[RMDB]
RNA sequence: GGGAACGACUCGAGUAGAGUCGAAAAGUUCCCUCUUAGCGUGGAGGUUUAACUACGCUCGUUCCCCAUAUGGGUGUGGGCGCACCGGAUUUAUAAAUCAAAGUCCUUUAGGGAACGGAAAGGAACAAAAAUCCAUGGGAGUUCGCUCCCAUGGAAACAAUUGCAAUAACUUCGGUUAUUGCAAUUGAAAAGAAACAACAACAACAAC
Reactivity to 2A3 in 0.01 (KOAc 150mM, MgCl2 10mM, bicine 150mM(pH8.5), 24C), signal-to-noise 1, nucleotides 027 to 156: g000u000u010c000c000c000u030c010u010u020a000g000c000g000u010g010g030a040g020g050u140u270u120a120a020c000u010a000c000g000c000u000c020g010u040u000c000c010c030c030a040u040a120u170g060g000g000u020g000u030g030g030g050c070g040c020a000c000c000g020g000a010u020u210u060a120u110a020a100a060u150c100a020a050a060g000u010c000c040u020u040u080a040g010g000g040a010a010c050g000g000a060a050a000g050g000a020a040c060a040a150a040a030a030u020c000c000a000u000g000g000g010a040g020u040u040c070g060c070u000c000c000c000a000u000g000g000a000a020a000
Reactivity to DMS in 0.01 (KOAc 150mM, MgCl2 10mM, bicine 150mM(pH8.5), 24C), signal-to-noise 2, nucleotides 027 to 156: g000u000u010c020c000c010u000c050u000u000a050g020c050g040u000g000g010a150g020g010u000u010u030a130a150c000u000a010c000g000c010u000c000g000u000u000c030c000c000c030a220u000a120u010g020g010g010u000g020u010g020g020g030c070g020c060a040c050c000g040g000a090u000u000u000a080u000a150a120a120u000c070a090a130a200g000u010c000c020u000u010u000a130g020g000g010a040a070c010g020g000a080a060a020g000g010a040a140c040a030a090a140a160a130u000c000c000a020u010g000g010g010a050g030u000u000c300g030c010u010c020c000c000a000u000g000g000a000a010a070
This 207-nucleotide RNA was probed chemically with 2A3 and DMS. The RNA was probed in 150 mM KOAc, 10 mM MgCl2 and 150 mM bicine (pH 8.5) at 24 C. Reactivities are given for positions 27 through 156. The DMS profile rests on 3,917 reads. For 2A3 the reverse transcriptase was SuperScript II with manganese. The 2A3 profile rests on 797 reads.